[RMDB]
RNA sequence: GGGAACGACUCGAGUAGAGUCGAAAACGACAGCUUUUCGAAGCUGUCGAUUGGCAAAGGCUAGGACCGGCCAGACAAAGGUCCGAUAGGAAAUCGUAACGAAGCUCGCCUGCUUCGGCAGGCGAAACGUUAGGACGCGAUUCGUCGCGUCCUAACGAAAAGAAACAACAACAACAAC
Reactivity to DMS in 0.01 (KOAc 150mM, MgCl2 10mM, bicine 150mM(pH8.5), 24C), signal-to-noise 1, nucleotides 027 to 126: c000g010a020c000a020g020c000u000u000u000u010c180g020a000a000g010c000u020g010u000c000g010a040u000u000g000g000c190a100a110a020g020g000c060u000a150g030g000a000c000c000g030g020c000c000a120g000a070c290a010a160a110g000g020u000c000c000g000a160u000a050g000g000a090a180a110u000c060g040u000a100a060c060g000a070a050g000c150u000c000g010c000c000u000g000c030u000u010c150g030g050c000a010g030g020c020g000a000a000a080
Structure probing data (DMS) for a 177-nucleotide construct. The reactions ran in a buffer of 150 mM KOAc, 10 mM MgCl2 and 150 mM bicine (pH 8.5), at 24 C. It was measured as part of the RMDB library M2PK50.